About this RNA:
This 207-nucleotide RNA was probed chemically with DMS and 2A3. The reactions ran in a buffer of 150 mM KOAc, 10 mM MgCl2 and 150 mM bicine (pH 8.5), at 24 C. Reactivities are given for positions 27 through 156. The 2A3 profile rests on 2,611 reads. The data come from the RNA Mapping Database (RMDB), library OK3TST.
RNA sequence: GGGAACGACUCGAGUAGAGUCGAAAAUGAGUGAGAGAGCACUCUCCAGCCCCAUCGGAGUGGGUUUGCAGGGAAAUCAUAAGGAAGAAAUCCUUAUCUUUCCAACACUGAGAUGCUUCUGCCGAAGAGUAGAAUGGGAGUGAGGGGACACGCAAAACCUGACCAAAAUAUUCGUAUUUUGGUCAGGAAAAGAAACAACAACAACAAC
Reactivity to DMS in 0.01 (KOAc 150mM, MgCl2 10mM, bicine 150mM(pH8.5), 24C), signal-to-noise 2, nucleotides 027 to 156: u010g000a060g030u000g000a090g000a120g020a170g040c020a060c010u000c000u020c040c050a130g020c040c030c010c020a080u010c060g000g000a140g020u000g000g020g000u000u000u000g070c020a140g030g000g000a000a100a030u000c070a030u010a010a030g050g030a080a270g020a130a110a130u000c010c000u000u000a020u000c030u010u010u000c020c010a060a120c030a090c050u040g000a130g020a090u000g020c060u010u010c040u000g020c020c030g000a090a170g000a070g010u000a000g000a080a100u000g000g000g000a110g020u000g040a040g010g000g030g000a090c050a030c060g020c060a060a050a080a150
Reactivity to 2A3 in 0.01 (KOAc 150mM, MgCl2 10mM, bicine 150mM(pH8.5), 24C), signal-to-noise 3, nucleotides 027 to 156: u130g000a020g050u080g010a070g000a020g010a020g100c020a030c040u010c000u010c030c010a050g020c000c000c020c010a060u060c050g090g020a090g040u110g010g050g000u070u130u130g010c030a030g050g000g050a000a010a030u060c040a020u020a020a000g020g020a020a140g110a180a200a070u020c010c000u010u010a010u010c030u020u010u000c010c000a060a030c060a020c060u050g010a020g010a100u050g020c010u030u010c020u030g060c010c050g120a140a070g040a010g030u050a020g030a130a040u090g050g000g000a050g040u060g010a040g030g020g000g010a000c030a030c080g020c030a040a080a050a120